Source information
This 207-nucleotide RNA was probed chemically with 2A3 and DMS. The 2A3 profile rests on 2,327 reads.

RNA sequence: GGGAACGACUCGAGUAGAGUCGAAAACUGCGGAUCGCUUGAGCUCAGGGCUUCUGGACUGCAGUGGACUAUGUUGAUCAGGUGUCCACACUAAGUUCGGUAUCGAUAUGGUGCUCCUGGGGGAGCUUGGGACCACCAGGUCGUGUUAUGAGGGGUGCACAUGUAGACUGUUCGCAGUCUACAUGUGAAAAGAAACAACAACAACAAC
Reactivity to 2A3 in 0.01 (KOAc 150mM, MgCl2 10mM, bicine 150mM(pH8.5), 24C), signal-to-noise 3, nucleotides 027 to 156: c030u070g010c020g050g030a170u060c030g000c140u040u090g030a010g030c010u030c080a050g020g070g010c010u100u000c020u030g010g030a030c010u050g020c030a030g000u030g000g010a010c010u060a050u160g090u170u200g150a150u230c060a070g070g140u100g020u030c010c000a000c010a000c020u080a060a030g030u010u030c010g020g020u080a050u110c020g000a030u050a060u190g040g000u030g030c030u020c010c000u030g010g010g000g030g030a050g100c000u030u080g010g000g000a030c040c000a030c000c010a030g020g000u050c040g010u030g030u110u130a070u150g060a040g000g020g000g010u050g010
Reactivity to DMS in 0.01 (KOAc 150mM, MgCl2 10mM, bicine 150mM(pH8.5), 24C), signal-to-noise 1, nucleotides 027 to 156: c030u000g030c030g020g000a090u010c050g010c030u000u000g010a070g030c040u000c030a130g020g050g010c060u000u030c030u000g000g010a050c050u000g000c160a140g060u010g010g000a080c020u010a100u000g030u000u010g000a180u000c070a080g010g060u020g030u000c000c040a020c050a130c110u000a050a080g000u010u000c000g020g000u010a130u000c010g030a070u000a090u010g010g030u000g030c090u000c010c000u010g010g000g000g030g010a100g030c040u020u000g000g010g010a080c090c020a070c000c010a050g010g070u000c010g030u020g030u000u000a060u000g000a100g020g030g010g040u000g030
Values cover nucleotides 27 to 156. For 2A3 the reverse transcriptase was SuperScript II with manganese.